[RMDB]
RNA sequence: GGGAACGACUCGAGUAGAGUCGAAAAGAUAUGGAGACUUUCUUAUAUGCAAGCUUUUGACGCUCUAAGGGUCGGAAACGACCCGAAAUGAGCGAUAAGCUUGCCAUAUAAGAAAGUCUCCUAAGUCGAAAUAUACGAGGUUCGCCUCGUAUAUUUCAAAAGAAACAACAACAACAAC
Reactivity to DMS in 0.01 (KOAc 150mM, MgCl2 10mM, bicine 150mM(pH8.5), 24C), signal-to-noise 1, nucleotides 027 to 126: g020a100u010a300u000g000g000a040g020a020c000u000u000u000c000u000u000a010u000a010u010g010c000a000a020g000c000u000u000u000u000g010a240c050g010c010u010c000u010a170a300g000g010g000u010c010g010g000a100a080a300c010g010a000c000c000c010g000a040a110a140u030g000a000g020c000g000a070u010a000a020g010c000u000u000g000c110c080a010u000a000u000a010a000g000a000a030a000g000u000c000u000c000c020u000a000a080g000u010c040
An RNA of 177 nucleotides, treated with DMS and read out base by base. Source: RMDB library TTRINS, as collected in RNAgym. For DMS, 1,087 sequencing reads were counted. The reactions ran in a buffer of 150 mM KOAc, 10 mM MgCl2 and 150 mM bicine (pH 8.5), at 24 C.